RNA sequence: GGGAACGACUCGAGUAGAGUCGAAAAAUUUACGACUCUCAAGCGAAGCGAGUGCUAGCAUGCUCGAUAGCACUAAACAAAACAGGAAACUGAAAAUCGAGCAAUCGGUAGAGUCGUUCCCAUACAAACGUUCUAUUAAGUUCGCUUAAUAGAACGUAAAAGAAACAACAACAACAAC
Reactivity to 2A3 in 0.01 (KOAc 150mM, MgCl2 10mM, bicine 150mM(pH8.5), 24C), signal-to-noise 3, nucleotides 027 to 126: a000u130u140u140a050c010g010a000c000u010c010u000c040a050a010g060c030g080a060a000g030c040g120a110g110u120g000c010u010a000g020c010a030u020g000c010u000c000g000a010u000a000g030c020a010c080u080a050a040a030c110a030a090a020a010c020a000g070g030a090a070a020c000u030g020a080a060a040a080u020c000g000a000g010c000a010a080u080c050g030g050u090a030g000a000g000u000c000g000u000u010c000c000c000a000u000a000c000a000a030
Reactivity to DMS in 0.01 (KOAc 150mM, MgCl2 10mM, bicine 150mM(pH8.5), 24C), signal-to-noise 4, nucleotides 027 to 126: a120u010u000u000a160c010g020a020c010u000c010u000c040a120a170g020c020g020a100a120g000c070g020a120g000u000g000c010u000a220g010c080a130u000g010c010u000c010g000a050u010a050g010c040a060c110u000a040a090a090c160a110a050a050a140c060a020g000g000a080a160a170c020u000g000a050a040a110a060u000c010g010a020g010c020a050a070u020c100g010g010u020a140g010a030g010u000c000g000u000u000c000c010c000a030u000a040c230a060a080
The record gives the reactivity of an RNA of 177 nucleotides to 2A3 and DMS. Conditions: 150 mM KOAc, 10 mM MgCl2 and 150 mM bicine (pH 8.5), 24 C. Source: RMDB library M2PK90, as collected in RNAgym. For 2A3 the reverse transcriptase was SuperScript II with manganese. For 2A3, 5,131 sequencing reads were counted.